[RMDB]
RNA sequence: GGGAACGACUCGAGUAGAGUCGAAAAGUAAGCAAAGACGUAAUAACCGUCAUGGUUAGUAAAUUGAGCGCAAGCCGUAAGAAAUGCAAACGCGUUAUGAUUCAGAACACGUGGUGCGCUAUUAUAACCAUACCAUUUAUUUCGAUAAAUGGUAUGGAAAAGAAACAACAACAACAAC
Reactivity to DMS in 0.01 (KOAc 150mM, MgCl2 10mM, bicine 150mM(pH8.5), 24C), signal-to-noise 9, nucleotides 027 to 126: g010u010a080a140g020c060a050a110a120g010a050c100g010u010a100a090u000a030a030c060c010g010u010c240a090u010g000g010u000u000a020g000u010a050a090a090u000u010g000a160g010c040g010c100a070a160g010c050c060g010u010a090a050g010a040a040a040u010g010c030a030a300a040c060g010c020g010u000u000a060u000g010a160u000u010c150a080g010a040a030c050a020c010g010u000g000g010u000g010c050g010c010u000a070u000u000a050u010a070a170
Reactivity to 2A3 in 0.01 (KOAc 150mM, MgCl2 10mM, bicine 150mM(pH8.5), 24C), signal-to-noise 9, nucleotides 027 to 126: g040u070a050a030g020c070a130a030a030g050a020c030g050u080a100a110u070a130a070c030c020g070u110c090a050u090g040g000u030u020a020g010u060a030a090a160u120u160g060a020g020c000g000c030a030a020g060c020c000g010u030a050a020g070a110a090a010u090g020c030a110a080a050c060g000c010g020u020u040a110u150g200a130u130u170c080a040g040a140a020c030a000c070g010u040g020g040u030g000c020g000c020u010a050u110u110a050u030a020a020
Chemical mapping of a 177-nucleotide RNA with DMS and 2A3. 2A3 adducts were read by reverse transcription with SuperScript II with manganese. DMS adducts were read by reverse transcription with MarathonRT. The RNA was probed in 150 mM KOAc, 10 mM MgCl2 and 150 mM bicine (pH 8.5) at 24 C. It was measured as part of the RMDB library OK2TRN. The 2A3 profile rests on 25,151 reads.